[RMDB]
RNA sequence: GGGAACGACUCGAGUAGAGUCGAAAAUUUGCGUGGUAGACGCAGGAUCAACGGCUGUGUCGGUGGGUGCUGACACCAUGCCCGCAUGCGGGAGAUGGGGGCGCAGCCGUUCAUCGGCAGCGAGGCGAUCAUGCCACCACUUCGGUGGUGGCAUGAUAAAAGAAACAACAACAACAAC
Reactivity to DMS in 0.01 (KOAc 150mM, MgCl2 10mM, bicine 150mM(pH8.5), 24C), signal-to-noise 1, nucleotides 027 to 126: u010u010u010g000c030g040u000g020g010u030a060g020a060c020g000c030a030g020g010a040u010c120a030a150c090g000g000c000u000g000u000g020u000c050g020g000u000g010g000g000u000g000c020u010g000a110c020a040c010c050a080u000g010c000c020c000g010c030a100u010g010c030g000g000g000a050g020a020u000g010g000g020g010g020c110g020c020a010g000c010c010g000u000u010c060a010u000c000g000g020c010a080g010c080g000a090g010g010c130g030
Reactivity to 2A3 in 0.01 (KOAc 150mM, MgCl2 10mM, bicine 150mM(pH8.5), 24C), signal-to-noise 1, nucleotides 027 to 126: u050u050u080g010c010g020u070g020g100u210a040g030a180c020g000c050a010g100g050a060u050c060a050a010c010g010g000c000u050g020u000g040u130c000g010g010u090g020g040g010u200g000c060u060g040a050c010a020c070c030a010u110g000c000c000c030g020c040a050u160g040c030g010g020g010a130g020a040u030g020g060g000g000g000c200g000c020a020g000c020c010g000u020u030c000a010u020c000g020g000c010a000g090c010g120a030g090g050c050g020

Structure probing data (DMS and 2A3) for a 177-nucleotide construct.